Background: This 177-nucleotide RNA was probed chemically with DMS and 2A3. For DMS, 1,517 sequencing reads were counted. DMS adducts were read by reverse transcription with MarathonRT.
RNA sequence: GGGAACGACUCGAGUAGAGUCGAAAACGCCCUAAGGUCGGCUCAGGCGGGUCAGAAACCCGCCGUAGAGUGCAAGGGCAAAAGCCGGCCUGACCGGACCCCUAAAGGCAGGGGGUCCGGCCGGGAAGUGUAUGCUUCUAUUCGUAGAAGCAUACACAAAAGAAACAACAACAACAAC
Reactivity to DMS in 0.01 (KOAc 150mM, MgCl2 10mM, bicine 150mM(pH8.5), 24C), signal-to-noise 2, nucleotides 027 to 126: c200g010c010c000c000u000a140a060g040g030u000c070g000g000c000u000c050a170g000g020c020g020g000g020u000c080a170g000a130a220a190c000c010c010g040c000c010g010u000a020g010a140g020u000g020c050a100a070g000g010g020c030a060a050a080a090g020c010c020g010g000c000c020u000g010a020c010c000g000g000a030c000c000c000c000u010a070a100a120g020g020c190a140g000g000g000g010g000u010c000c000g010g010c000c030g010g010g010a110a090
Reactivity to 2A3 in 0.01 (KOAc 150mM, MgCl2 10mM, bicine 150mM(pH8.5), 24C), signal-to-noise 1, nucleotides 027 to 126: c020g020c000c020c000u020a090a020g070g030u080c030g020g000c010u000c040a010g000g020c010g040g010g000u010c070a020g140a060a090a020c010c000c020g000c050c000g030u050a000g000a020g040u070g030c020a030a110g060g070g010c020a150a070a000a020g050c020c000g010g030c010c010u000g000a010c020c010g000g000a000c000c000c000c000u040a110a080a020g240g000c070a070g030g000g000g010g040u000c000c000g000g000c000c000g020g010g010a090a100
Values cover nucleotides 27 to 126. 2A3 adducts were read by reverse transcription with SuperScript II with manganese. Source: RMDB library OK2TST, as collected in RNAgym.